[RMDB]
RNA sequence: GGGAACGACUCGAGUAGAGUCGAAAAGUGCUCUCAAUGACCGAUUGUCUGGCCGCUGAGACACAUAGGGAUUGUGAUUUUAAUAAACCACUCAUUGAGUGGCCACUUACUGAGUAUGAUUUUACUGAUACAUGUUCCUUCGGGAACAUGAAAAGAAACAACAACAACAAC
Reactivity to 2A3 in 0.01 (KOAc 150mM, MgCl2 10mM, bicine 150mM(pH8.5), 24C), signal-to-noise 8, nucleotides 027 to 129: g000u000g010c020u000c010u000c000a010a020u030g020a020c010c010g130a110u120u080g070u080c060u070g040g040c020c010g020c090u040g030a010g000a010c000a010c020a020u050a050g080g000g040a100u100u100g020u030g050a080u020u070u050u090a140a120u140a070a040a030c030c000a000c000u000c010a190u090u190g020a000g000u080g050g000c000c000a040c000u080u160a040c050u040g020a010g040u070a110u140g170a180u030u060u080u100a090c030u020g020a020u020a120
Reactivity to DMS in 0.01 (KOAc 150mM, MgCl2 10mM, bicine 150mM(pH8.5), 24C), signal-to-noise 6, nucleotides 027 to 129: g030u000g030c050u000c000u000c000a020a040u010g030a080c000c050g020a180u000u030g030u100c060u040g050g000c050c000g000c050u000g050a000g020a080c040a030c090a040u030a120g020g040g010a070u000u000g000u040g020a140u010u000u010u030a050a050u000a060a190a170c000c040a020c000u020c000a150u030u030g030a050g060u050g030g050c090c080a050c120u020u030a090c170u070g010a020g030u000a050u000g040a060u100u040u020u000a080c000u000g000a150u040a140
An RNA of 170 nucleotides, treated with 2A3 and DMS and read out base by base. The DMS profile rests on 26,785 reads. For 2A3 the reverse transcriptase was SuperScript II with manganese. Conditions: 150 mM KOAc, 10 mM MgCl2 and 150 mM bicine (pH 8.5), 24 C. Source: RMDB library 15KLIB, as collected in RNAgym.